[RMDB]
RNA sequence: GGGAACGACUCGAGUAGAGUCGAAAAGGAAGCUCCUCGCGAAGAAGUCGAUUGCAUAGGGGAGGAUCCACACGAGGAUCAACACAAAAACAGCGACCAUCAACUGCUUCUUGGCUCGUGCAGCCUCGAUACUUCUUGGAUUCGUCCAAGAAGUAUCAAAAGAAACAACAACAACAAC
Reactivity to DMS in 0.01 (KOAc 150mM, MgCl2 10mM, bicine 150mM(pH8.5), 24C), signal-to-noise 6, nucleotides 027 to 126: g000g010a100a110g010c020u010c010c010u010c120g020c060g010a090a100g010a120a080g020u010c080g010a090u000u000g010c100a090u000a150g020g000g000g000a090g020g010a040u000c010c020a090c150a070c170g000a110g010g000a030u000c020a060a070c150a040c140a030a050a040a070a050c120a080g000c060g000a060c050c050a060u000c070a060a080c060u000g000c060u000u000c030u000u000g010g000c020u010c150g020u000g010c070a060g000c020c020u010c160
Reactivity to 2A3 in 0.01 (KOAc 150mM, MgCl2 10mM, bicine 150mM(pH8.5), 24C), signal-to-noise 5, nucleotides 027 to 126: g030g000a050a010g020c000u010c010c010u030c030g030c050g060a060a110g050a080a020g100u100c060g120a260u040u190g000c070a050u140a170g010g010g020g010a030g040g020a010u000c010c000a060c000a030c110g090a100g040g010a030u030c020a010a080c040a020c030a110a120a020a160a010c030a020g030c020g050a040c030c000a040u070c010a020a050c020u050g010c000u080u030c000u060u070g050g000c020u010c050g110u100g020c040a010g030c010c000u020c030

An RNA of 177 nucleotides, treated with DMS and 2A3 and read out base by base. For DMS the reverse transcriptase was MarathonRT. The reactions ran in a buffer of 150 mM KOAc, 10 mM MgCl2 and 150 mM bicine (pH 8.5), at 24 C. 2A3 adducts were read by reverse transcription with SuperScript II with manganese. For DMS, 6,669 sequencing reads were counted.